[RMDB]
RNA sequence: GGGAACGACUCGAGUAGAGUCGAAAAAGCGAUUCGUCGCUGAGGGUGAUAUGGAAGCGUUGGAGUCUCCGAACUACUUGCCACCGUCGGAAACGACGGGAUGGCAAGCGGAGACUAUGAAGACGCUUCCUAAGUCGGGAGAGCUGUUCGCAGCUAACUCCUACACUCUUUUCGAAGAGUGUAGGAGAAAAGAAACAACAACAACAAC
Reactivity to 2A3 in 0.01 (KOAc 150mM, MgCl2 10mM, bicine 150mM(pH8.5), 24C), signal-to-noise 3, nucleotides 027 to 156: a000g000c010g000a020u100u160c190g040u020c000g150c020u010g010a110g040g040g070u190g050a070u050a020u200g000g000a000a000g010c010g000u030u030g020g020a110g010u010c000u020c000c000g030a070a100c090u180a060c000u240u000g010c000c000a010c000c010g010u010c000g000g050a050a020a050c000g010a010c000g000g000g000a050u160g000g000c000a000a000g000c000g000g000a000g010a000c000u030a070u040g000a010a020g020a010c000g000c000u000u000c000c000u000a010a000g010u000c030g000g050g020a100g010a010g080c000u040g070u160u100c180g000c170a010g050c080u150a060a090
Reactivity to DMS in 0.01 (KOAc 150mM, MgCl2 10mM, bicine 150mM(pH8.5), 24C), signal-to-noise 2, nucleotides 027 to 156: a030g010c010g000a060u010u000c180g040u000c000g010c000u000g020a130g000g020g010u010g030a120u000a150u010g020g030a010a010g000c010g020u010u020g020g000a010g010u000c000u020c000c000g000a100a220c020u010a100c000u010u000g020c000c000a090c000c000g000u000c000g030g000a220a090a300c010g010a020c000g010g010g000a050u000g050g000c010a000a020g010c030g030g000a040g030a020c000u000a030u000g000a190a300g020a000c000g030c000u000u000c000c000u000a000a050g020u000c030g010g000g030a150g000a160g010c010u000g020u000u000c110g020c100a110g010c060u000a070a180
Chemical mapping of a 207-nucleotide RNA with 2A3 and DMS. For 2A3, 2,315 sequencing reads were counted. 2A3 adducts were read by reverse transcription with SuperScript II with manganese.